[RMDB]
RNA sequence: GGGAACGACUCGAGUAGAGUCGAAAAGAUAUGGAAUGUCUUAGCUAGCUGGGCAUCGGAAACGAUGCUACAGCUUGGACCUAACAUGACAUUCCUAAGUCAAAACGACUAUCUUCGGAUAGUCGAACCUCAUUCUUCUCUUCGGAGAAGAAUGAGGAAAAGAAACAACAACAACAAC
Reactivity to DMS in 0.01 (KOAc 150mM, MgCl2 10mM, bicine 150mM(pH8.5), 24C), signal-to-noise 3, nucleotides 027 to 126: g000a030u000a300u000g000g020a020a000u000g020u000c010u000u000a040g070c100u010a020g060c020u000g000g000g000c000a030u000c000g000g000a170a090a200c020g010a010u000g010c000u000a020c000a000g020c000u000u020g010g000a140c300c060u000a090a120c300a080u020g010a020c020a050u010u000c000c000u030a040a120g020u000c040a120a090a150a170c040g000a030c000u000a000u000c000u000u020c300g040g000a010u000a010g000u000c010g000a030a080
Reactivity to 2A3 in 0.01 (KOAc 150mM, MgCl2 10mM, bicine 150mM(pH8.5), 24C), signal-to-noise 2, nucleotides 027 to 126: g030a010u100a030u130g000g000a000a020u000g000u000c030u090u050a050g020c070u030a010g000c000u030g030g000g000c010a000u000c000g030g000a090a070a050c010g000a000u000g030c010u040a040c010a010g000c010u010u020g020g010a010c010c020u060a060a030c130a230u290g000a000c000a000u000u030c010c000u030a190a040g050u030c050a020a030a130a190c030g020a000c020u000a030u010c020u040u100c300g140g000a020u010a020g000u000c000g010a000a020
An RNA of 177 nucleotides, treated with DMS and 2A3 and read out base by base. Values cover nucleotides 27 to 126. The RNA was probed in 150 mM KOAc, 10 mM MgCl2 and 150 mM bicine (pH 8.5) at 24 C.